[RMDB]
RNA sequence: GGGAACGACUCGAGUAGAGUCGAAAACAAAGCCGCUUCGGCGGCUUUGAAAGAUGCAUUUUACGCCAAGAAAUCCCGGAACAUUGGCCCGUUUGCGGGAGAAAACCUAUGCGUUCGCGCAUAGGAACUCUUAAAGUUAGUUCGCUAACUUUAAGAGAAAAGAAACAACAACAACAAC
Reactivity to 2A3 in 0.01 (KOAc 150mM, MgCl2 10mM, bicine 150mM(pH8.5), 24C), signal-to-noise 3, nucleotides 027 to 126: c000a010a010a000g010c000c010g010c030u060u090c190g130g000c000g000g030c000u000u000u000g000a010a010a000g060a020u100g010c000a030u040u100u090u300a100c080g020c020c010a080a020g070a110a150a020u010c030c000c000g010g020a040a030c030a070u040u120g130g040c010c020c010g010u020u070u150g190c010g060g000g010a020g050a020a090a010a010c000c000u010a000u000g010c000g020u020u040c300g010c010g000c030a000u000a000g000g000a000a000
Reactivity to DMS in 0.01 (KOAc 150mM, MgCl2 10mM, bicine 150mM(pH8.5), 24C), signal-to-noise 5, nucleotides 027 to 126: c010a010a010a000g020c000c000g030c000u000u010c200g030g020c000g010g010c010u010u000u000g000a050a090a090g010a080u010g010c040a080u010u010u010u000a080c120g010c020c070a080a100g000a070a150a130u000c000c000c020g010g000a030a040c060a090u000u000g010g020c050c080c100g000u000u010u000g020c020g000g000g000a070g010a060a060a130a120c010c000u000a000u000g000c010g020u000u010c200g010c010g020c010a000u000a000g000g010a030a040